[RMDB]
RNA sequence: GGGAACGACUCGAGUAGAGUCGAAAAAGAGCCGGAUACGACCGGCUCAACGGGGGAUACGUGUGGUGCCGUCCGCUCCCCCUAUGGCAUAACAAAUGCACCACACACUAGGCUACGGCCUAGUGAAAAAAGGUGUAUGUGUUCGCACAUACACCAAGACAUGUAGAUCCUUCGGGAUCUACAUGUCAAAAGAAACAACAACAACAAC
Reactivity to 2A3 in 0.01 (KOAc 150mM, MgCl2 10mM, bicine 150mM(pH8.5), 24C), signal-to-noise 2, nucleotides 027 to 156: a010g020a020g000c000c010g040g020a060u150a140c180g080a080c040c000g000g000c030u020c020a000a010c010g000g000g000g010g010a060u040a130c030g010u000g010u000g040g010u000g020c040c000g020u040c090c060g080c020u040c000c000c000c020c010u050a140u180g130g000c090a100u080a270a040c030a120a040a010u090g000c000a000c000c010a010c000a000c000a010c000u000a010g000g010c000u020a010c290g100g000c040c000u000a000g000u000g000a130a000a000a000a000a010g000g000u020g000u000a000u020g000u000g020u040u080c150g040c050a000c000a000u000a000c010a000c000c000a000a000
An RNA of 207 nucleotides, treated with 2A3 and read out base by base.
Reactivities are given for positions 27 through 156.
The data come from the RNA Mapping Database (RMDB), library M2RFPK.